Chemical mapping of a 207-nucleotide RNA with DMS and 2A3.

RNA sequence: GGGAACGACUCGAGUAGAGUCGAAAACCGUAGGCCUCGAACUACAAACGGUUACAUCCAACAGCAAACUUUCGAAAGAGAGUUUGACAUGGAUGUAUCGUUUGCGAGGCCUAAACGGAAAGCUGUAGACAUCUGAUUCGUCAGAUGUCUACAGCAAGAUGUAUUGACGGUUCGCCGUCAAUACAUCAAAAGAAACAACAACAACAAC
Reactivity to DMS in 0.01 (KOAc 150mM, MgCl2 10mM, bicine 150mM(pH8.5), 24C), signal-to-noise 2, nucleotides 027 to 156: c000c000g020u000a030g020g020c000c000u000c020g010a110a300c060u010a110c000a000a000a000c000g020g000u010u000a020c000a000u000c000c000a020a140c100a220g000c000a000a000a010c000u000u000u010c010g030a240a200a290g010a030g020a000g020u000u000u000g010a020c030a300u000g000g000a020u010g020u000a000u000c000g030u000u010u000g010c000g030a010g020g030c010c000u010a000a050a030c020g010g010a120a130a140g000c010u000g010u010a010g040a010c030a000u000c000u000g000a050u010u000c300g010u000c000a030g010a000u010g020u000c000u030a000c000a010g020c000a000a030
Reactivity to 2A3 in 0.01 (KOAc 150mM, MgCl2 10mM, bicine 150mM(pH8.5), 24C), signal-to-noise 5, nucleotides 027 to 156: c000c000g000u010a000g000g010c000c000u010c010g060a140a080c090u190a060c270a010a000a000c000g030g040u170u120a000c000a000u000c000c000a050a020c050a220g050c000a000a000a000c010u000u000u000c010g050a080a150a040g000a010g000a000g000u000u000u010g090a060c010a050u060g000g000a000u000g010u000a000u000c000g010u000u000u000g010c000g000a000g000g020c000c000u010a020a010a000c010g020g040a180a080a020g000c000u000g000u000a000g000a000c000a000u000c000u000g000a020u060u060c170g050u020c130a000g000a000u000g000u000c000u000a000c000a000g000c000a000a000
The 2A3 profile rests on 7,473 reads. The RNA was probed in 150 mM KOAc, 10 mM MgCl2 and 150 mM bicine (pH 8.5) at 24 C. It was measured as part of the RMDB library RNAMAK.